The record gives the reactivity of an RNA of 207 nucleotides to 2A3.
The reactions ran in a buffer of 150 mM KOAc, 10 mM MgCl2 and 150 mM bicine (pH 8.5), at 24 C.
Reactivities are given for positions 27 through 156.
RNA sequence: GGGAACGACUCGAGUAGAGUCGAAAAACAACAGAUAGCUGGAACCAGCGUAGAAUUCUACGCAUAUCCAUAGCGAAUGGUACCUGUAAAGAAAAUAAUGAUUGAUGUACAAGUACCAACAGUAAUCAAUGCCAUGGUGAUGUCAAUCACAUAUGCAGUCGUAAAAUCCGUUCGCGGAUUUUACGACAAAAGAAACAACAACAACAAC
Reactivity to 2A3 in 0.01 (KOAc 150mM, MgCl2 10mM, bicine 150mM(pH8.5), 24C), signal-to-noise 1, nucleotides 027 to 156: a000c020a050a000c000a000g190a250u120a030g000c010u000g000g000a120a150c050c000a020g000c000g050u020a000g060a030a300u300u020c000u000a000c010g000c000a000u010a030u050c000c000a030u040a020g030c010g020a130a050u020g000g000u000a000c010c000u000g010u030a000a160a000g250a030a050a080a000u300a010a190u170g050a160u000u080g130a070u040g000u050a030c010a040a000g000u000a000c000c000a000a020c000a020g020u120a000a050u050c070a040a020u120g000c060c120a020u060g030g010u000g000a000u030g120u120c140a140a010u000c000a000c010a030u160a010u150g070c020a000